RNA sequence: GGGAACGACUCGAGUAGAGUCGAAAAGUCCCCAGUAUGACGUUAAACUGCUGACUCAUACAUACUGACACCGGUUGCUCAACAGGCUGUGUUGGACAAUAGAAUAACAAGGCUGUCAAUUUGAGCUAAAACUCCUCGGGGUUCGCCCCGAGGAGAAGAUUUAAAACGCGUUCGCGCGUUUUAAAUCAAAAGAAACAACAACAACAAC
Reactivity to 2A3 in 0.01 (KOAc 150mM, MgCl2 10mM, bicine 150mM(pH8.5), 24C), signal-to-noise 2, nucleotides 027 to 156: g000u010c000c000c000c000a000g000u020a000u080g020a000c030g020u030u020a050a030a000c060u090g010c010u020g060a020c050u040c000a010u050a150c010a040u120a140c060u010g050a010c010a040c040c010g080g040u060u040g000c010u020c010a020a030c010a070g300g030c110u170g050u000g020u260u000g040g020a010c020a020a030u060a170g100a080a100u100a160a010c020a050a040g050g040c070u000g000u020c010a010a040u060u090u090g010a010g000c040u040a060a100a020a080c000u020c000c000u000c000g070g000g000g000u030u050c050g050c000c010c000c010g000a000g000g000a000g000a000a000
The data come from the RNA Mapping Database (RMDB), library M2RFPK. This 207-nucleotide RNA was probed chemically with 2A3. For 2A3, 683 sequencing reads were counted. The RNA was probed in 150 mM KOAc, 10 mM MgCl2 and 150 mM bicine (pH 8.5) at 24 C.